This 177-nucleotide RNA was probed chemically with DMS and 2A3.
2A3 adducts were read by reverse transcription with SuperScript II with manganese.
DMS adducts were read by reverse transcription with MarathonRT.
Conditions: 150 mM KOAc, 10 mM MgCl2 and 150 mM bicine (pH 8.5), 24 C.

[RMDB]
RNA sequence: GGGAACGACUCGAGUAGAGUCGAAAACCUGGCAAUAAACUAAGCACAGCAUUAUUUUUUAAGGAACACAAAUUAAGUGUUCAACCUGUGGCAAAUUUGUACUUUCUCCCUGAAUUAUGUUGUUAUCUUAUUUAAUUCGAUUCGUCGAAUUAAAUAAAAAAGAAACAACAACAACAAC
Reactivity to DMS in 0.01 (KOAc 150mM, MgCl2 10mM, bicine 150mM(pH8.5), 24C), signal-to-noise 3, nucleotides 027 to 126: c040c020u020g000g010c070a090a070u000a070a100a090c070u020a110a180g010c020a010c020a050g020c150a100u000u010a010u010u010u030u030u030u020a090a100g000g000a020a040c020a000c020a100a110a140u010u020a090a060g030u000g000u010u000c010a040a120c200c010u010g000u000g000g000c060a040a090a080u000u000u010g000u010a070c060u010u000u000c080u000c020c000c020u000g020a110a090u000u020a040u010g000u000u000g010u000u000a100u010c020
Reactivity to 2A3 in 0.01 (KOAc 150mM, MgCl2 10mM, bicine 150mM(pH8.5), 24C), signal-to-noise 4, nucleotides 027 to 126: c000c000u010g080g040c070a020a110u100a130a090a010c070u050a110a000g020c020a020c010a030g010c050a040u060u080a190u080u160u070u010u100u150a060a080g100g000a010a000c000a000c010a020a170a050u190u150a290a120g000u000g000u000u000c000a010a020c000c010u020g000u010g120g010c010a030a060a080u100u040u040g020u040a090c020u020u040u050c060u060c000c000c030u030g090a140a050u210u040a090u250g000u010u010g020u010u010a120u080c010